[RMDB]
RNA sequence: GGGAACGACUCGAGUAGAGUCGAAAAAUCUGUUAGAGAUGAACUAGGGAACGAGAAACUUACUCCAAAUACUGAAUUAAAAAUUGAAGUAAUUGACCCACGGGCAACUGUUGUGGUUUGUGAUGAUACAGUUGAGCAUGAUCCUUUAUUUGCUGUAAAAUUACUCAGUAUUCGUACUGAGUAAUUUAAAAGAAACAACAACAACAAC
Reactivity to DMS in 0.01 (KOAc 150mM, MgCl2 10mM, bicine 150mM(pH8.5), 24C), signal-to-noise 2, nucleotides 027 to 156: a100u000c020u000g030u000u010a100g000a150g000a080u010g000a080a110c060u000a100g000g030g000a080a050c070g020a130g000a110a110a060c130u000u010a030c020u000c000c010a050a070a140u010a300c100u010g010a150a160u010u010a070a110a080a100a160u010u000g000a040a050g010u010a020a060u000u010g000a120c000c000c010a080c130g010g030g010c010a020a080c030u000g010u000u020g010u000g000g010u000u000u000g020u000g010a090u000g000a130u000a060c010a040g030u000u020g030a110g030c050a080u000g000a130u000c070c030u000u000u000a070u010u010u000g000c020u030g000u000a080
Reactivity to 2A3 in 0.01 (KOAc 150mM, MgCl2 10mM, bicine 150mM(pH8.5), 24C), signal-to-noise 3, nucleotides 027 to 156: a000u020c020u030g030u090u090a070g010a020g010a130u080g050a050a040c050u070a090g000g000g030a050a040c070g020a070g050a160a150a020c020u030u050a040c020u040c020c020a040a030a040u120a070c050u060g080a050a140u160u180a200a120a030a030a090u080u060g020a060a000g020u040a060a050u070u100g030a040c000c020c020a010c070g000g040g000c000a120a010c060u050g030u030u020g010u070g070g000u040u110u090g040u070g020a070u020g000a050u040a070c030a020g030u040u060g070a010g020c050a020u080g030a060u150c010c000u080u180u100a120u120u140u150g030c010u070g030u120a000
This 207-nucleotide RNA was probed chemically with DMS and 2A3. DMS adducts were read by reverse transcription with MarathonRT. The DMS profile rests on 3,699 reads. 2A3 adducts were read by reverse transcription with SuperScript II with manganese. It was measured as part of the RMDB library OK3TST.